RNA sequence: GGGAACGACUCGAGUAGAGUCGAAAAGAACCGCGAUUCGUCGCGGUUCGAGCGCCGUAGCGCGCAACGGCGUAACGGCAGCAUUAGCGCGCAGCUGCCGUCGAUCGGGUGGUUUCGACCACCCGAAAAAGACGUCAUACUUCGGUAUGACGUCUUUAAAAGAAACAACAACAACAAC
Reactivity to DMS in 0.01 (KOAc 150mM, MgCl2 10mM, bicine 150mM(pH8.5), 24C), signal-to-noise 1, nucleotides 027 to 126: g000a000a020c000c000g040c000g020a060u000u000c220g010u000c000g030c000g000g000u000u000c000g010a070g000c010g010c000c020g020u000a090g010c060g010c020g020c020a100a010c010g000g010c010g000u000a110a050c000g000g010c000a010g000c000a130u000u000a080g000c020g020c010g020c050a190g000c000u000g000c000c010g020u000c150g000a100u000c000g000g010g030u000g010g000u000u000u010c180g010a030c010c010a010c000c020c000g000a010a020
Notes:
Conditions: 150 mM KOAc, 10 mM MgCl2 and 150 mM bicine (pH 8.5), 24 C. Structure probing data (DMS) for a 177-nucleotide construct. For DMS, 1,342 sequencing reads were counted. It was measured as part of the RMDB library M2PK50.